[RMDB]
RNA sequence: GGGAACGACUCGAGUAGAGUCGAAAAUUGCGCUUGCCUAUUUAGGCAUACUUCUCAGGAUGGCGCGUUGCAGUCCAACAAGAUCCAGGGACUGUACAGUAUUUUCCUAUACCUCGAGUCGGGUUUGAAAACGUUAGGCACUUCGGUGCCUAACGAAUCGGUAGACUUAGUUCGCUAAGUCUACCGAAAAAGAAACAACAACAACAAC
Reactivity to DMS in 0.01 (KOAc 150mM, MgCl2 10mM, bicine 150mM(pH8.5), 24C), signal-to-noise 1, nucleotides 027 to 156: u020u020g000c030g060c030u000u000g000c000c000u010a270u020u000u000a000g040g010c060a110u010a030c040u010u020c040u020c090a100g020g000a030u010g000g020c010g040c040g030u000u010g040c040a050g000u080c010c000a160a300c140a170a150g000a130u020c110c030a210g010g000g010a000c010u000g050u000a030c080a170g020u010a070u000u000u000u010c040c000u030a120u010a060c110c040u000c010g040a060g010u000c020g070g000g040u000u000u000g000a100a050a050a110c010g000u010u000a000g010g000c000a000c000u040u000c300g040g040u000g000c010c010u000a000a000c010g010a030a020
Reactivity to 2A3 in 0.01 (KOAc 150mM, MgCl2 10mM, bicine 150mM(pH8.5), 24C), signal-to-noise 2, nucleotides 027 to 156: u010u060g010c000g000c020u050u060g000c000c000u150a230u210u270u220a060g000g000c010a000u070a060c120u210u130c080u030c110a090g090g090a100u070g060g010c000g000c000g020u020u020g000c000a000g000u000c030c000a050a050c020a170a200g100a250u150c080c100a080g030g000g000a000c000u000g010u000a020c020a020g130u160a050u000u000u020u010c000c000u040a030u020a100c040c030u000c000g000a000g000u020c020g000g060g040u070u060u090g100a070a070a010a010c010g000u000u000a000g000g030c000a000c000u000u050c160g050g000u000g000c000c000u000a000a000c000g000a000a000